The data come from the RNA Mapping Database (RMDB), library OK3TST. Structure probing data (DMS and 2A3) for a 207-nucleotide construct.
RNA sequence: GGGAACGACUCGAGUAGAGUCGAAAACGAGGAUGAGCUGGUGCAAUUGACCAAGACGCUGCUGGAGCCCGUGCCCACGCUGACUCCGAAGCAGUUGUACAGGGCGAUGGUGAUCAUUCUGGAGUUGACUGCGUCGCAGGACAUCGACUCGCUGAUCCUCCUCCUACGUAUUCGUACGUAGGAGGAGAAAAGAAACAACAACAACAAC
Reactivity to DMS in 0.01 (KOAc 150mM, MgCl2 10mM, bicine 150mM(pH8.5), 24C), signal-to-noise 1, nucleotides 027 to 156: c040g000a100g020g000a070u000g000a160g030c070u000g010g000u000g010c010a020a060u000u000g030a110c010c060a080a230g020a080c070g030c000u000g040c010u030g010g030a110g030c000c000c060g050u000g000c060c030c080a150c100g050c010u010g000a130c040u000c040c020g000a060a160g000c000a110g010u030u010g000u000a080c040a150g010g010g020c000g010a100u000g050g030u010g000a130u000c000a120u000u010c040u000g070g000a090g010u010u030g010a120c070u020g010c030g050u000c030g000c050a130g030g020a090c060a100u000c030g000a010c000u000c010g000c040u010g000a210u000c010
Reactivity to 2A3 in 0.01 (KOAc 150mM, MgCl2 10mM, bicine 150mM(pH8.5), 24C), signal-to-noise 1, nucleotides 027 to 156: c080g030a040g030g000a030u060g010a000g030c040u050g050g070u050g030c030a070a060u040u180g030a050c040c000a030a030g040a020c030g000c030u030g010c000u090g040g020a010g000c000c020c010g000u020g000c020c050c020a070c020g010c020u040g020a090c020u040c090c010g030a040a000g010c010a020g000u130u210g000u090a080c060a080g000g000g010c060g020a040u080g040g020u070g060a080u080c030a050u170u030c010u060g050g030a020g020u040u040g070a040c040u020g000c040g120u110c100g020c040a060g000g070a020c040a070u020c030g030a040c030u000c030g050c020u020g020a050u000c000
DMS adducts were read by reverse transcription with MarathonRT.